[RMDB]
RNA sequence: GGGAACGACUCGAGUAGAGUCGAAAAGCAAAUAAGAUUUAGGGGAAGAAGAUGACAACCUUCUCGCGGUCUUCCCUGUUACGUGUGUAGACACAAUGAAUGACAUCAAAACUAAAUAUACAAAAAACAGGUAUUUAUGGUUCGCCAUAAAUACCUGAAAAGAAACAACAACAACAAC
Reactivity to DMS in 0.01 (KOAc 150mM, MgCl2 10mM, bicine 150mM(pH8.5), 24C), signal-to-noise 2, nucleotides 027 to 126: g030c070a040a080a090u010a120a130g000a090u010u000u000a100g020g010g030g010a040a030g000a110a120g000a070u010g010a130c120a060a120c060c030u000u000c000u000c060g000c160g030g000u000c020u000u000c010c010c000u020g030u000u000a040c210g000u000g000u000g000u000a060g000a030c010a010c020a080a100u000g000a090a060u000g010a110c060a040u000c050a040a100a080a110c080u020a020a030a040u010a090u000a070c040a000a040a140a010a060a090
Reactivity to 2A3 in 0.01 (KOAc 150mM, MgCl2 10mM, bicine 150mM(pH8.5), 24C), signal-to-noise 2, nucleotides 027 to 126: g100c060a030a080a080u200a190a110g030a170u070u090u190a100g050g020g020g040a030a030g010a100a060g080a120u150g020a050c040a010a040c040c000u000u060c040u000c040g070c010g060g060u030c000u040u000c000c020c010u010g010u040u030a090c130g010u000g020u030g040u060a030g110a110c010a010c000a000a040u110g040a050a090u090g030a020c020a060u070c000a000a000a140a070c010u100a070a110a060u210a030u080a050c050a020a030a000a020a090a000